This 207-nucleotide RNA was probed chemically with 2A3 and DMS. Reactivities are given for positions 27 through 156. It was measured as part of the RMDB library RNAMAK. The reactions ran in a buffer of 150 mM KOAc, 10 mM MgCl2 and 150 mM bicine (pH 8.5), at 24 C. For DMS the reverse transcriptase was MarathonRT. For DMS, 2,071 sequencing reads were counted.
[RMDB]
RNA sequence: GGGAACGACUCGAGUAGAGUCGAAAACCGUAGGUCGCUCUCCCCACCAAUUGGCCAGCUUGGAUUUAUCGCUUCGAAAGAGGCGAUUGUCAGCUGGACCAAUUGAGGAGCGACCUAAACGGAAAGUCAGUUCUAAUGUUCGCAUUAGAACUGACAAUCACGUACAUCAGUUCGCUGAUGUACGUGAAAAAGAAACAACAACAACAAC
Reactivity to 2A3 in 0.01 (KOAc 150mM, MgCl2 10mM, bicine 150mM(pH8.5), 24C), signal-to-noise 1, nucleotides 027 to 156: c010c000g010u010a010g000g010u000c000g000c000u000c000u030c050c100c000c000a050c000c000a000a000u000u000g020g010c010c010a010g010c060u200u220g170g000a100u280u290u040a000u030c000g000c000u000u010c010g110a130a080a060g000a000g040g000c010g000a010u000u010g000u000c000a000g000c000u000g000g050a010c000c000a000a000u000u000g000a010g000g000a000g010c000g010a000c000c000u000a020a000a000c000g030g050a180a020a010g000u030c000a000g010u010u000c000u010a000a000u010g030u060u190c300g020c180a000u010u000a000g000a000a000c000u000g000a000c000a000a000
Reactivity to DMS in 0.01 (KOAc 150mM, MgCl2 10mM, bicine 150mM(pH8.5), 24C), signal-to-noise 1, nucleotides 027 to 156: c030c010g060u000a050g010g010u000c010g050c010u000c000u000c300c070c030c000a300c230c030a010a020u010u000g010g000c000c010a030g000c000u000u000g030g030a050u020u010u000a000u000c000g020c010u000u000c000g000a190a150a230g030a020g030g000c010g070a010u000u000g000u000c010a090g050c000u000g050g000a080c070c000a000a000u000u000g010a300g020g010a050g000c010g010a120c010c010u000a000a030a040c000g000g030a050a050a130g020u000c010a010g000u000u000c000u000a000a000u010g000u000u010c300g020c010a020u000u000a020g000a000a000c010u000g000a000c000a020a110